RNA sequence: GGGAACGACUCGAGUAGAGUCGAAAAUUGGUUUCGACUGCGUGCAUUAAGCUAGGGGAAGCGUGCCGGUGCAGGCUAGAGACCACCGAUUUUAAGCGUCGUAGCAAAUAUAUAAGCGCAGAGAACACUCAGCGCGACUACGCCCUCGCUGCCUAAUCUAAAUCGAAAUCUUCGGAUUUCGAUUUAGAAAAGAAACAACAACAACAAC
Reactivity to 2A3 in 0.01 (KOAc 150mM, MgCl2 10mM, bicine 150mM(pH8.5), 24C), signal-to-noise 3, nucleotides 027 to 156: u060u050g010g000u030u000u060c050g050a070c020u070g030c030g070u080g000c030a040u040u150a190a050g030c040u080a050g010g060g000g020a030a010g030c040g040u040g060c050c020g050g020u030g010c010a020g050g000c020u040a020g010a000g020a030c010c020a010c030c020g020a060u020u050u090u300a080a010g000c010g000u030c010g010u050a000g000c040a010a080a000u160a010u020a020u040a100a070g000c000g000c040a010g020a010g010a300a030c140a080c110u050c040a020g000c010g000c000g000a000c010u060a030c040g020c040c020c010u060c010g000c010u010g040c000c020u040a050a060u000